[RMDB]
RNA sequence: GGGAACGACUCGAGUAGAGUCGAAAAAAGAAAGCUAUCCAAUUCUUGGGUAGAAACUAUUUUUUCGGACGGGAUUCGUAUGUUCAUUUCGCAUGAUAACUCUAGCUAUAGCCUUUUUUGGCGUAGUGCUCAGUGUACCAUUCGUGGUACACUGAGCAAAAGAAACAACAACAACAAC
Reactivity to 2A3 in 0.01 (KOAc 150mM, MgCl2 10mM, bicine 150mM(pH8.5), 24C), signal-to-noise 3, nucleotides 027 to 126: a000a000g080a010a030a000g030c010u010a000u010c000c010a020a080u300u090c140u120u040g000g000g000u020a000g000a030a030a000c020u020a000u000u020u000u000u000u030c020g030g010a020c000g080g020g050a020u000u060c010g000u080a050u200g040u040u000c000a030u070u100u110c150g070c060a010u070g060a090u120a070a100c020u040c070u090a020g000c000u010a010u030a080g020c000c050u030u170u120u040u120u300g000g000c030g030u020a010g010u000